[RMDB]
RNA sequence: GGGAACGACUCGAGUAGAGUCGAAAAGAUAUGGAGAACUGGAGUCGGCACCAGCCGAGUCGGAAACGAUAUCUGGUGUCGACGUUGAAAGUUCUCCUAAGUCAAAAGUGGCAGUUCGCUGCCACAACAUGGCUUAACCGUUCGCGGUUAAGCCAUGAAAAGAAACAACAACAACAAC
Reactivity to DMS in 0.01 (KOAc 150mM, MgCl2 10mM, bicine 150mM(pH8.5), 24C), signal-to-noise 2, nucleotides 027 to 126: g000a030u000a300u030g000g010a030g000a040a000c010u000g030g000a110g020u000c010g010g010c000a020c030c000a000g020c300c120g020a060g010u010c000g000g000a140a050a230c030g010a010u000a070u000c010u040g010g020u000g010u000c000g020a000c010g010u030u020g000a110a090a010g000u000u000c020u000c020c000u000a000a030g000u030c050a050a110a150a130g000u000g000g010c000a000g020u000u060c180g010c010u000g000c000c000a000c020a020a100